[RMDB]
RNA sequence: GGGAACGACUCGAGUAGAGUCGAAAAUACAUCUUGUUUAUUGAAACUACUUUCUAAAACUGGCUCCUUAGUUAUUUCAGGUUUGAAUUGAUCGUUAACUUCGCUAUUUACUUGAUCAAACUGCUCAUGAGAGUAGUAUUUUCGAAUACUACUCUCAAAAAGAAACAACAACAACAAC
Reactivity to 2A3 in 0.01 (KOAc 150mM, MgCl2 10mM, bicine 150mM(pH8.5), 24C), signal-to-noise 2, nucleotides 027 to 126: u130a010c080a070u050c000u060u020g100u040u140u070a130u060u140g050a040a020a000c050u120a100c050u090u120u050c010u040a010a030a030a070c030u000g000g030c020u040c040c020u020u070a020g020u060u080a160u060u140u030c030a010g110g010u020u080u090g090a060a050u030u030g020a040u060c000g010u030u020a020a060c020u110u060c050g000c070u020a020u050u100u020a040c020u000u020g000a010u010c020a020a050a000c000u090g050c010u050c110a110
Reactivity to DMS in 0.01 (KOAc 150mM, MgCl2 10mM, bicine 150mM(pH8.5), 24C), signal-to-noise 5, nucleotides 027 to 126: u010a100c110a100u000c060u000u000g010u000u000u000a100u020u000g000a080a060a090c130u000a090c070u000u010u000c030u010a070a050a060a070c050u000g000g010c050u000c050c030u000u010a070g010u010u000a060u000u010u010c070a060g010g010u000u000u010g020a060a080u000u000g010a040u000c030g020u000u010a050a050c100u000u000c100g020c100u000a050u000u000u000a040c080u000u000g000a040u000c050a030a050a100c040u000g000c050u000c080a190
Source: RMDB library OK2TST, as collected in RNAgym. An RNA of 177 nucleotides, treated with 2A3 and DMS and read out base by base. The reactions ran in a buffer of 150 mM KOAc, 10 mM MgCl2 and 150 mM bicine (pH 8.5), at 24 C. For DMS, 7,749 sequencing reads were counted.